[RMDB]
RNA sequence: GGGAACGACUCGAGUAGAGUCGAAAAGCAUAACUGUUCGCAGUUAUGCAAAACACGAAGCUCGAAACAGACGCAGUGAAACAAACAAAAGCGAAAACAAAAAAAGCCAACAGUUCGCUGUUGGCAACAUUCGUAACAACUUCGGUUGUUACGAAUGAAAAGAAACAACAACAACAAC
Reactivity to DMS in 0.01 (KOAc 150mM, MgCl2 10mM, bicine 150mM(pH8.5), 24C), signal-to-noise 2, nucleotides 027 to 126: g010c000a000u000a010a010c000u000g000u010u000c120g010c000a010g000u000u000a000u000g010c000a020a020a090a060c120a050c000g010a250a150g000c030u000c010g020a180a130a140c190a090g010a070c090g000c000a060g000u000g010a080a090a060c060a060a080a140c050a040a030a100a050g050c030g000a060a030a080a080c160a070a020a070a100a090a090a080g030c060c000a020a000c000a000g000u000u000c250g020c000u000g010u010u000g000g000c000a020a040
Reactivity to 2A3 in 0.01 (KOAc 150mM, MgCl2 10mM, bicine 150mM(pH8.5), 24C), signal-to-noise 2, nucleotides 027 to 126: g010c000a000u020a020a000c000u010g050u030u070c180g000c070a000g000u000u000a000u000g000c000a000a060a000a000c040a000c020g070a100a030g000c000u010c010g070a220a160a080c070a080g090a040c040g030c030a010g020u030g080a100a050a030c070a020a110a030c030a030a150a060a000g010c020g060a060a030a000a060c080a030a230a030a000a020a010a010g000c010c010a000a000c000a000g040u080u100c170g000c090u000g000u010u010g000g000c000a000a010